An RNA of 207 nucleotides, treated with DMS and 2A3 and read out base by base. For 2A3 the reverse transcriptase was SuperScript II with manganese. The RNA was probed in 150 mM KOAc, 10 mM MgCl2 and 150 mM bicine (pH 8.5) at 24 C. For DMS, 3,669 sequencing reads were counted. The data come from the RNA Mapping Database (RMDB), library RNAMAK. For DMS the reverse transcriptase was MarathonRT.

RNA sequence: GGGAACGACUCGAGUAGAGUCGAAAAGGUAAGGACUUCGGUCCUUACCAAAAAAACCUUUGUGUAAGCGAUGAACUACCCUCGACGACGCCCAUUGGGCAUCAGAGGGCAUCAGCUUACACUCUGGUAAAAACACGAUGGUUUCGACCAUCGUGAAUACUACCGGUAGAUUCGUCUACCGGUAGUAAAAAGAAACAACAACAACAAC
Reactivity to DMS in 0.01 (KOAc 150mM, MgCl2 10mM, bicine 150mM(pH8.5), 24C), signal-to-noise 2, nucleotides 027 to 156: g030g010u000a000a040g020g010a020c000u000u000c300g040g000u000c010c010u000u010a000c000c010a000a000a030a060a050a070a040c010c010u000u000u000g000u000g030u000a010a020g020c000g000a250u000g000a140a080c050u000a110c030c000c000u010c000g020a090c150g020a020c010g030c010c000c000a300u000u000g000g030g040c000a010u010c000a050g020a010g000g030g070c000a040u000c010a220g000c010u000u000a010c030a000c000u000c030u010g010g010u000a040a120a100a110a160c010a000c010g010a000u010g010g000u000u000u000c300g020a060c000c000a000u000c010g020u000g000a050a120
Reactivity to 2A3 in 0.01 (KOAc 150mM, MgCl2 10mM, bicine 150mM(pH8.5), 24C), signal-to-noise 3, nucleotides 027 to 156: g010g000u000a000a010g020g010a010c010u040u130c300g030g000u020c000c000u000u010a000c010c000a000a020a000a000a000a010a000c020c000u020u000u000g000u000g000u000a000a000g000c010g000a010u000g030a080a070c090u190a150c290c000c000u020c020g130a160c090g000a030c050g120c030c010c080a300u220u300g000g000g000c000a040u050c030a030g000a000g010g000g010c010a000u000c010a000g010c000u000u000a000c000a000c000u000c000u000g010g010u090a150a090a000a000a000c010a000c010g000a000u000g000g070u020u090u170c240g140a050c000c000a000u000c000g010u000g000a010a020